[RMDB]
RNA sequence: GGGAACGACUCGAGUAGAGUCGAAAAGCGCACUUCGAUCCAGGCGCGACGCUCGCCACGCCAACAGUUCCGGCCGAGUGUCUCGCGGGACAGCUCGCCGGAAAGUGCCUUGGCUCCUGCGCGCAGCCACUGAUCCUGGUUUCGACCAGGAUCAGUGAAAAGAAACAACAACAACAAC
Reactivity to DMS in 0.01 (KOAc 150mM, MgCl2 10mM, bicine 150mM(pH8.5), 24C), signal-to-noise 3, nucleotides 027 to 126: g020c020g000c030a060c070u010u000c190g000a040u000c040c050a100g010g010c040g010c040g000a110c090g010c030u000c080g000c080c070a140c090g000c020c050a070a110c100a110g000u010u000c000c000g020g000c060c040g020a010g010u000g000u000c000u000c010g020c280g010g010g030a010c000a000g000c000u000c040g040c020c000g020g000a030a000a000g000u000g000c050c100u040u020g010g000c020u000c050c060u000g010c060g010c030g010c080a150g000c020
Reactivity to 2A3 in 0.01 (KOAc 150mM, MgCl2 10mM, bicine 150mM(pH8.5), 24C), signal-to-noise 5, nucleotides 027 to 126: g020c010g010c020a060c080u100u070c130g110a100u050c040c030a030g040g010c000g000c000g030a040c050g000c010u040c010g010c020c000a050c060g000c010c010a030a040c000a130g010u020u000c010c000g000g040c150c100g010a000g000u020g000u000c010u020c010g050c170g030g010g000a010c010a040g160c010u000c000g000c000c000g000g000a000a020a000g040u010g010c000c020u040u050g010g000c010u040c020c030u060g000c030g000c000g000c050a020g040c020
This 177-nucleotide RNA was probed chemically with DMS and 2A3. Source: RMDB library OK1LIB, as collected in RNAgym. For 2A3 the reverse transcriptase was SuperScript II with manganese. The RNA was probed in 150 mM KOAc, 10 mM MgCl2 and 150 mM bicine (pH 8.5) at 24 C. Values cover nucleotides 27 to 126.